Conditions: 150 mM KOAc, 10 mM MgCl2 and 150 mM bicine (pH 8.5), 24 C.
The record gives the reactivity of an RNA of 207 nucleotides to DMS and 2A3.
For DMS the reverse transcriptase was MarathonRT.
The DMS profile rests on 3,859 reads.
For 2A3, 1,130 sequencing reads were counted.

[RMDB]
RNA sequence: GGGAACGACUCGAGUAGAGUCGAAAAAUUUGGACACUUUGUACAACAUUAUGGCUAGCCAUAGGAUGACAAAUGUCUAUAAUCUCAUGUCCCACGCAGGCAUGCUGUAUGCCAAGUGCGGCGGUGUAUCAUCAGGUAAUGCUAUCACAGCGUUGGGUGCUAAUUUCGAAUUCGUUCGAAAUUAGCAAAAAGAAACAACAACAACAAC
Reactivity to DMS in 0.01 (KOAc 150mM, MgCl2 10mM, bicine 150mM(pH8.5), 24C), signal-to-noise 2, nucleotides 027 to 156: a130u000u020u000g010g020a050c000a010c110u000u000u000g040u010a090c050a040a100c050a290u000u000a010u000g020g020c050u000a180g000c030c020a070u000a040g000g010a300u010g000a040c040a010a030a030u000g000u000c020u010a070u000a050a100u010c010u030c040a120u010g000u000c000c000c020a070c070g020c040a220g030g020c030a060u010g010c080u010g030u000a060u000g010c030c030a060a120g030u000g020c030g000g030c010g040g030u010g030u000a050u020c030a070u020c050a100g010g020u000a050a080u000g000c000u000a110u010c090a070c080a070g020c000g000u000u010g000g000g010
Reactivity to 2A3 in 0.01 (KOAc 150mM, MgCl2 10mM, bicine 150mM(pH8.5), 24C), signal-to-noise 2, nucleotides 027 to 156: a000u080u040u070g000g010a000c020a020c100u000u040u040g030u110a080c020a080a020c040a090u090u110a000u030g000g050c070u080a060g150c010c000a020u010a010g100g010a110u040g010a010c010a010a040a000u010g020u000c010u000a060u070a090a130u030c020u000c040a040u130g070u050c000c020c000a010c020g030c020a040g030g000c030a010u040g000c070u080g120u160a070u110g000c030c020a110a010g130u130g010c070g020g010c030g020g020u040g030u040a080u160c080a050u030c020a030g030g020u130a230a010u050g030c030u070a060u190c060a050c050a130g000c010g100u150u080g070g000g000